This 177-nucleotide RNA was probed chemically with DMS.

[RMDB]
RNA sequence: GGGAACGACUCGAGUAGAGUCGAAAAGAGCGUUCCAAGGGCGUCGAAGCAAGACCGGAAGGACUUGUGGAGCGCUUGGAAGUGAGAAUGCCGGUAUGAGUAGCGAAAGAUGGGUGAGAAUCCCAUCUCGGUUAAUCGGGUUCGCCCGAUUAACCGAAAAAGAAACAACAACAACAAC
Reactivity to DMS in 0.01 (KOAc 150mM, MgCl2 10mM, bicine 150mM(pH8.5), 24C), signal-to-noise 1, nucleotides 027 to 126: g000a190g020c020g000u000u000c000c000a040a040g010g010g000c000g000u000c210g000a150a220g000c020a010a010g000a170c000c000g000g100a190a090g020g010a050c000u000u000g000u000g000g000a060g010c020g010c010u000u000g000g010a020a030g010u000g000a070g000a090a050u000g010c000c010g020g000u010a060u000g000a090g010u000a020g020c090g000a040a110a140g010a000u000g010g000g000u000g020a150g000a220a170u000c010c000c000a000u000c020
DMS adducts were read by reverse transcription with MarathonRT.
Reactivities are given for positions 27 through 126.